[RMDB]
RNA sequence: GGGAACGACUCGAGUAGAGUCGAAAACAGCUACGUUUCGACGUAGCUGAAAAUAAAACAGGCAAGUACCAGCCUGAAAAAGGUACAAAGAUCGAUAGAUCAAAACGGUUCGAUUCGUCGAACCGAACUGUAAUAUGGAGUUCGCUCCAUAUUACAGAAAAGAAACAACAACAACAAC
Reactivity to DMS in 0.01 (KOAc 150mM, MgCl2 10mM, bicine 150mM(pH8.5), 24C), signal-to-noise 5, nucleotides 027 to 126: c010a010g000c000u000a000c000g020u000u000u020c220g020a020c000g010u000a000g020c000u000g010a000a050a060a060u010a100a040a130a150c220a010g000g000c000a030a140g010u000a000c000c000a140g010c000c010u000g000a010a020a010a050a040g020g020u000a010c000a100a120a110g000a010u000c000g020a190u010a090g010a000u000c000a090a060a070a150c010g010g000u000u000c000g000a020u000u010c170g000u000c000g010a010a000c010c000g010a030a040
Reactivity to 2A3 in 0.01 (KOAc 150mM, MgCl2 10mM, bicine 150mM(pH8.5), 24C), signal-to-noise 8, nucleotides 027 to 126: c000a000g000c000u000a000c000g020u010u040u160c210g100a030c000g000u000a000g000c000u000g000a000a000a000a010u110a000a060a020a030c110a020g000g000c020a120a070g000u000a010c000c000a010g010c000c010u000g050a050a000a000a000a000g010g000u010a010c020a030a140a010g010a000u030c030g070a090u160a250g010a020u030c040a000a060a020a060c010g000g010u000u000c000g000a010u020u060c180g030u010c000g100a000a000c000c000g000a020a010